Structure probing data (2A3 and DMS) for a 177-nucleotide construct.
The 2A3 profile rests on 1,928 reads.
For 2A3 the reverse transcriptase was SuperScript II with manganese.
The DMS profile rests on 1,928 reads.
RNA sequence: GGGAACGACUCGAGUAGAGUCGAAAAGGGAUGCUAGGAGUAGGAGGAGACCGAAGCGAGGAGGAAAGCAAAGAAAGCAACGGGGCUAGCCGUCAGGUGUUCCGCCCCCCGGCAGGACACGAGUGAGCUUAGAAUAGGUCUUCGGACCUAUUCUAAGAAAAGAAACAACAACAACAAC
Reactivity to 2A3 in 0.01 (KOAc 150mM, MgCl2 10mM, bicine 150mM(pH8.5), 24C), signal-to-noise 1, nucleotides 027 to 126: g040g000g020a020u060g020c030u070a040g040g030a050g060u100a040g050g070a030g030g010a050g040a020c000c020g050a030a030g040c040g010a040g050g000a030g000g000a090a010a010g030c060a030a010a150g120a050a110a000g030c020a030a080c040g000g000g000g000c030u030a030g010c000c020g020u030c030a030g000g100u060g050u080u000c010c000g020c000c000c010c020c000c020g000g030c030a030g050g010a010c000a000c070g010a030g060u130g070a060g000
Reactivity to DMS in 0.01 (KOAc 150mM, MgCl2 10mM, bicine 150mM(pH8.5), 24C), signal-to-noise 3, nucleotides 027 to 126: g000g010g010a090u010g010c060u010a070g020g000a060g040u000a050g010g000a090g020g000a100g000a050c060c080g000a070a100g010c100g000a050g010g010a050g020g000a060a090a060g010c080a040a070a100g000a060a080a090g020c070a060a070c110g010g000g000g010c060u010a080g020c020c050g000u010c120a030g020g030u000g000u000u000c020c050g010c000c010c020c040c080c210g000g030c020a050g000g010a040c070a050c050g000a100g030u010g000a100g030